[RMDB]
RNA sequence: GGGAACGACUCGAGUAGAGUCGAAAAGAAAGAAAGAAAGUUCAUUGUUUAUCGGAAACUUUAAACUAUAACCAUUCAAACUUAUCCAGAAGUUAGUUUGAAUAGAAAUUAAAAAGAAACUUCUGAAUGACCUUGGCACCGUUCGCGGUGCCAAGAACUGUGUAUUCAUGUUCGCAUGAAUACACAGAAAAGAAACAACAACAACAAC
Reactivity to 2A3 in 0.01 (KOAc 150mM, MgCl2 10mM, bicine 150mM(pH8.5), 24C), signal-to-noise 1, nucleotides 027 to 156: g040a000a020a000g070a050a040a000g030a100a140a000g000u040u070c040a040u070u190g040u060u080u120a150u200c090g030g020a100a090a090c030u020u120u080a130a030a010c020u090a030u040a230a000c000c000a010u020u000c000a010a000a040c000u080u050a040u090c050c010a000g000a020a000g020u000u000a020g000u000u000u000g000a000a000u080a080g020a000a140a040u290u200a040a110a000a030a000g100a050a050a020c000u010u010c000u000g040a060a100u050g040a010c000c000u000u000g010g020c000a000c060c000g000u030u040c110g040c020g140g010u000g040c010c010a000a000g030a000a010
The record gives the reactivity of an RNA of 207 nucleotides to 2A3.
The RNA was probed in 150 mM KOAc, 10 mM MgCl2 and 150 mM bicine (pH 8.5) at 24 C.
For 2A3, 1,080 sequencing reads were counted.
It was measured as part of the RMDB library M2RFOK.